[RMDB]
RNA sequence: GGGAACGACUCGAGUAGAGUCGAAAAGGAGACUGACCCGUAGCUAGCAGACAAUUCAGUCCCAGUACUCGGCAAGCGUGAUGGGGCUUGCUUUCAGCGCUCUUCAGAUCUCUGAAAAGAGUCGGUGACGUAGCUUCGUUUUCGAACGAAGCUACGUAAAAGAAACAACAACAACAAC
Reactivity to DMS in 0.01 (KOAc 150mM, MgCl2 10mM, bicine 150mM(pH8.5), 24C), signal-to-noise 2, nucleotides 027 to 126: g000g000a110g010a080c050u000g000a020c170c020c040g020u000a070g000c050u030a080g020c060a130g060a100c060a060a110u010u000c070a030g010u010c010c030c000a090g000u030a060c050u010c050g030g030c040a030a050g000c040g040u040g000a120u040g000g020g000g000c000u000u000g010c020u000u000u010c030a050g000c000g010c020u000c010u030u000c010a050g000a140u020c170u000c000u000g000a030a050a050a030g000a010g010u040c000g000g000u000g030
Reactivity to 2A3 in 0.01 (KOAc 150mM, MgCl2 10mM, bicine 150mM(pH8.5), 24C), signal-to-noise 3, nucleotides 027 to 126: g060g000a100g000a020c020u020g020a010c010c050c050g030u020a040g010c060u040a010g030c070a060g070a090c030a020a100u100u050c030a070g040u040c000c000c000a020g030u090a050c020u040c060g080g000c060a030a050g060c040g020u100g080a140u140g050g000g000g000c010u000u060g010c000u010u060u050c010a020g020c020g000c020u010c000u080u030c010a030g020a300u040c040u000c000u110g060a010a030a040a030g040a000g010u070c030g080g080u100g010
Conditions: 150 mM KOAc, 10 mM MgCl2 and 150 mM bicine (pH 8.5), 24 C.
Chemical mapping of a 177-nucleotide RNA with DMS and 2A3.
For DMS the reverse transcriptase was MarathonRT.
2A3 adducts were read by reverse transcription with SuperScript II with manganese.
It was measured as part of the RMDB libraries RFM100 and RFMREP.